Structure probing data (DMS) for a 177-nucleotide construct.
[RMDB]
RNA sequence: GGGAACGACUCGAGUAGAGUCGAAAAGAUAUGGAAGCUUACAAAUCAAUUUCCCGUCGAUAAGUUGCAUUCGGAAACGAAUGGCAACUUUUGACGACGGAAAUUGAUUUGUAAGCUUCCUAAGUCACUGCUCAAUAUUGUUCGCAAUAUUGAGCAGAAAAGAAACAACAACAACAAC
Reactivity to DMS in 0.01 (KOAc 150mM, MgCl2 10mM, bicine 150mM(pH8.5), 24C), signal-to-noise 2, nucleotides 027 to 126: g000a040u010a300u000g000g010a010a010g030c000u010u000a010c000a010a010a010u000c010a000a010u000u000u010c070c010c060g020u000c000g020a070u000a030a010g010u000u000g000c010a030u000u000c010g010g000a130a120a300c010g000a020a000u000g030g020c000a010a010c000u000u010u010u000g020a120c100g000a160c270g010g000a000a000a000u000u000g000a000u010u010u000g000u000a000a000g000c000u000u000c000c000u000a010a070g010u000c050a210
Overview: The DMS profile rests on 1,914 reads. Conditions: 150 mM KOAc, 10 mM MgCl2 and 150 mM bicine (pH 8.5), 24 C. Values are in units of 0.01, from 0 to 300, in steps of 10. Reactivities are given for positions 27 through 126.